[RMDB]
RNA sequence: GGGAACGACUCGAGUAGAGUCGAAAAGAGAUGUUACUGUGUACCUAGUGUCACCUAUGGAACGCACUAGGACAGGUGACCUUUCCUGGGGAAUGCUUAUCAGAAAGGUCAAGAUAAGCACAUUUGACAUUUUACCUGAUUUCGAUCAGGUAAAAUGAAAAGAAACAACAACAACAAC
Reactivity to 2A3 in 0.01 (KOAc 150mM, MgCl2 10mM, bicine 150mM(pH8.5), 24C), signal-to-noise 9, nucleotides 027 to 126: g050a010g020a050u160g010u020u020a020c020u030g020u030g020u300a300c010c000u000a000g010u010g060u100c050a080c060c040u160a190u300g080g020a080a030c090g000c010a000c000u000a000g000g000a000c000a000g000g000u000g000a000c000c000u020u040u010c000c010u010g000g000g010g000a090a040u090g000c000u010u000a010u020c010a030g240a220a190a060g180g060u110c070a030a020g000a010u000a000a000g060c010a010c010a130u090u100u130g040a030
Reactivity to DMS in 0.01 (KOAc 150mM, MgCl2 10mM, bicine 150mM(pH8.5), 24C), signal-to-noise 9, nucleotides 027 to 126: g010a030g010a100u010g020u000u000a010c020u000g020u010g030u000a130c000c010u000a010g010u000g010u010c170a300c070c050u010a130u020g020g020a060a170c300g010c010a010c010u000a010g000g010a030c010a170g000g000u000g010a010c000c080u000u000u000c010c010u000g030g000g000g020a200a130u000g000c010u000u000a010u000c000a140g000a080a100a130g010g010u010c120a100a110g010a010u000a000a010g010c010a060c260a090u010u000u000g010a270